RNA sequence: GGGAACGACUCGAGUAGAGUCGAAAAAUGAUUCCUACCACCUUACUACUGACGAAGACACCCAUUCCAGUGGACCACUGUGACCCAGGAGGCAUUCAGCCAUCAUGAUGUGGCCUUUACCUCCACUGAUUCCAUCGGCGUUCGCGCCGAUGGAAUCAAAAGAAACAACAACAACAAC
Reactivity to 2A3 in 0.01 (KOAc 150mM, MgCl2 10mM, bicine 150mM(pH8.5), 24C), signal-to-noise 1, nucleotides 027 to 126: a000u090g000a030u010u000c010c000u010a060c000c000a010c000c000u120u020a030c020u010a000c000u020g020a010c040g010a110a020g010a000c030a050c070c000c000a000u030u010c040c000a010g080u050g050g100a040c020c000a060c010u060g030u120g080a030c000c000c000a050g000g000a010g010g000c050a050u080u020c040a020g000c010c000a000u020c000a070u170g120a150u120g080u040g000g000c000c000u000u000u130a040c000c030u000c000c000a000c040u010
Chemical mapping of a 177-nucleotide RNA with 2A3.